Conditions: 150 mM KOAc, 10 mM MgCl2 and 150 mM bicine (pH 8.5), 24 C. An RNA of 207 nucleotides, treated with 2A3 and read out base by base. The 2A3 profile rests on 731 reads. Reactivities are given for positions 27 through 156. Source: RMDB library OK3TST, as collected in RNAgym.
RNA sequence: GGGAACGACUCGAGUAGAGUCGAAAAACGGUUGGUCAAACUGAGAAGCAUCAACUGGAAUUAAAAAUUAGAUGUGAUCAUUAGGUAAUGAGUUCUGUUUUGAAAUCUUCUUAAAAAACACUUUCAAAUAUCAUUUCAACAAUGAAAUAUCAUUGGACUUCUGUGAAAAUUUCGAUUUUCACAGAAGAAAAGAAACAACAACAACAAC
Reactivity to 2A3 in 0.01 (KOAc 150mM, MgCl2 10mM, bicine 150mM(pH8.5), 24C), signal-to-noise 2, nucleotides 027 to 156: a000c040g000g000u000u000g020g010u020c040a050a100a130c110u220g100a130g020a220a000g000c040a000u040c000a000a010c060u100g020g030a020a070u110u250a150a080a050a050a040u190u160a060g060a100u030g020u030g020a010u000c050a050u030u050a030g050g030u060a090a020u010g000a040g030u150u030c090u030g120u050u080u100u110g050a070a060a090u070c010u160u010c050u160u110a110a240a030a100a080a000c040a010c010u050u140u060c040a050a040a000u110a030u240c000a000u070u250u060c040a050a070c000a040a030u080g010a030a040a030u160a030u220c000a040u060u070g030g040a020